Overview
Conditions: 150 mM KOAc, 10 mM MgCl2 and 150 mM bicine (pH 8.5), 24 C. Chemical mapping of a 177-nucleotide RNA with 2A3 and DMS. Values cover nucleotides 27 to 126. DMS (dimethyl sulfate) methylates the pairing face of unpaired adenines and cytosines. The DMS profile rests on 1,934 reads.

RNA sequence: GGGAACGACUCGAGUAGAGUCGAAAAUAUAUAUAGAUCGUUCUAUUAACGAACACGCGCGGGUCGUCGGUGGUCGGCGAGCCCACGGACGAACUUACUCGCGCGAUCGAGUAAAAAUCGCCAGGAACAGUGUAAAUGCUUUCGAGCAUUUACACUGAAAAGAAACAACAACAACAAC
Reactivity to 2A3 in 0.01 (KOAc 150mM, MgCl2 10mM, bicine 150mM(pH8.5), 24C), signal-to-noise 2, nucleotides 027 to 126: u110a000u000a000u000a000u050a030g040a080u060c020g020u060u000c050u060a250u260u140a190a050c040g000a020a030c040a030c090g000c000g000c010g000g010g020u040c000g000u000c030g150g020u010g000g020u010c110g020g000c030g000a030g000c010c020c000a000c000g050g000a000c010g020a060a000c030u080u120a010c000u080c000g000c000g020c000g020a000u000c000g000a000g010u120a020a100a010a000a040u050c010g000c010c000a000g020g120a100a030
Reactivity to DMS in 0.01 (KOAc 150mM, MgCl2 10mM, bicine 150mM(pH8.5), 24C), signal-to-noise 3, nucleotides 027 to 126: u000a060u010a100u010a120u000a090g010a100u010c040g010u000u000c030u010a240u010u000a120a150c130g000a030a030c080a130c080g010c000g000c010g000g000g010u000c000g000u010c010g010g040u000g000g010u000c040g010g000c030g040a030g000c300c000c000a000c020g010g010a020c000g000a120a060c150u020u020a050c000u010c010g010c010g010c020g000a000u000c050g000a110g010u000a020a060a030a030a040u000c000g000c030c010a260g010g020a050a140

Values are in units of 0.01, from 0 to 300, in steps of 10.